[RMDB]
RNA sequence: GGGAACGACUCGAGUAGAGUCGAAAAAUGCGAGCUAGACUAGUGACGCUCUAGGUCAUGAGUACGAUACGAUCGACAUACCAUGCAUGCGAUCAUCAUGGUGUGUAGUACGCUCGAUCAGUACUACGUUGAUGAGAUCGUUCGCGAUCUCAUCAACAAAAGAAACAACAACAACAAC
Reactivity to 2A3 in 0.01 (KOAc 150mM, MgCl2 10mM, bicine 150mM(pH8.5), 24C), signal-to-noise 2, nucleotides 027 to 126: a000u160g040c060g030a000g080c030u030a020g040a160c020u030a050g130u030g170a060c080g090c070u050c040u050a060g020g090u040c040a060u190g050a020g000u010a010c010g020a030u070a120c000g010a020u030c020g010a010c000a010u020a000c000c020a000u010g000c060a010u040g030c140g300a150u300c020a000u040c000a000u060g000g000u000g000u010g000u030a040g080u070a040c020g010c030u000c000g010a010u000c060a020g000u010a010c000u040a080c080
Reactivity to DMS in 0.01 (KOAc 150mM, MgCl2 10mM, bicine 150mM(pH8.5), 24C), signal-to-noise 2, nucleotides 027 to 126: a110u010g000c090g010a130g010c030u000a040g000a090c070u010a140g000u020g020a110c100g000c170u000c110u000a070g010g010u010c030a050u030g000a090g010u000a010c000g010a070u020a060c040g010a010u000c000g000a080c010a030u000a000c000c010a000u000g000c260a000u010g010c270g000a140u020c050a050u000c010a000u000g000g000u000g030u000g000u000a080g020u000a190c040g010c060u000c010g010a030u000c000a080g020u010a010c000u010a050c230